This 177-nucleotide RNA was probed chemically with 2A3 and DMS.
The 2A3 profile rests on 2,344 reads.
Conditions: 150 mM KOAc, 10 mM MgCl2 and 150 mM bicine (pH 8.5), 24 C.
For DMS the reverse transcriptase was MarathonRT.
The DMS profile rests on 2,528 reads.
High 2A3 reactivity points to a flexible backbone, as in loops and unpaired stretches.
Source: RMDB library M2PK90, as collected in RNAgym.
2A3 adducts were read by reverse transcription with SuperScript II with manganese.

[RMDB]
RNA sequence: GGGAACGACUCGAGUAGAGUCGAAAACACAUGCCAUCAUAUCGGUUAAGAACUCUUAACUCUGAUGGCUUUCGAGUUAUGUGGUGCAUUGAAGCUCUCCCUUCAAUUCAACGUACCCUUCCGUCAAUCGUCCGUUUAAAUUCGUUUAAACGGACGAAAAAGAAACAACAACAACAAC
Reactivity to 2A3 in 0.01 (KOAc 150mM, MgCl2 10mM, bicine 150mM(pH8.5), 24C), signal-to-noise 2, nucleotides 027 to 126: c070a000c000a040u060g000c020c000a000u000c000a010u040a050u270c070g000g020u000u000a010a020g090a300a260c050u000c000u300u010a000a000c000u020c050u080g000a000u000g000g010c000u000u020u010c000g010a000g000u070u010a070u160g090u130g010g000u050g000c040a060u000u040g030a010a000g010c020u000c030u090c100c030c070u020u040c030a040a030u050u040c030a030a030c030g010u030a030c020c000c000u020u050c020c020g080u040c040a030a100
Reactivity to DMS in 0.01 (KOAc 150mM, MgCl2 10mM, bicine 150mM(pH8.5), 24C), signal-to-noise 3, nucleotides 027 to 126: c080a100c120a040u000g020c000c000a000u000c000a060u000a160u010c300g010g000u000u000a000a010g010a230a200c300u030c010u000u000a000a010c010u000c140u000g000a010u000g010g010c010u000u000u000c090g000a070g010u000u000a060u010g030u000g010g000u010g010c030a050u000u000g020a020a020g000c090u010c080u000c040c030c000u000u000c100a050a080u000u000c010a020a040c040g020u000a040c010c000c090u000u000c020c030g000u020c130a070a130